Annotation: This 177-nucleotide RNA was probed chemically with 2A3 and DMS. It was measured as part of the RMDB libraries RFM100 and RFMREP.
[RMDB]
RNA sequence: GGGAACGACUCGAGUAGAGUCGAAAAAAACAUGUCGAAGCAUGACCUCUGCCGAGGUAGUCUGUGGGGUAGAGCGACGGAUUGGGGGACCGCACUCCGAGAGGAGUGCGCCCCCCUGUCCAACUCCUUCGAUCUGAUAUUUCGAUAUCAGAUCGAAAAAAGAAACAACAACAACAAC
Reactivity to 2A3 in 0.01 (KOAc 150mM, MgCl2 10mM, bicine 150mM(pH8.5), 24C), signal-to-noise 4, nucleotides 027 to 126: a000a010a010c070a040u080g010u090c120g070a090a010g040c030a030u060g030a060c010c010u020c030u050g060c020c040g040a030g040g050u050a040g060u020c050u060g130u080g020g050g020g000u030a020g030a040g100c090g050a030c080g000g000a010u020u030g000g000g000g000g010a020c020c010g000c000a000c000u000c010c000g030a040g010a010g070g000a000g000u000g000c000g000c000c000c000c000c000c000u000g000u000c000c000a010a020c010u020c000c000
Reactivity to DMS in 0.01 (KOAc 150mM, MgCl2 10mM, bicine 150mM(pH8.5), 24C), signal-to-noise 4, nucleotides 027 to 126: a060a040a090c050a000u010g010u010c060g010a130a080g000c040a040u010g020a150c020c000u000c020u000g010c140c080g000a070g000g020u010a060g000u010c020u020g020u020g020g010g000g050u010a050g000a060g010c080g010a080c210g000g010a010u010u010g000g000g010g000g010a020c300c040g030c000a000c000u010c000c010g040a250g000a200g000g010a020g040u000g020c020g020c020c000c000c000c000c010u000g010u000c000c000a140a120c070u020c030c070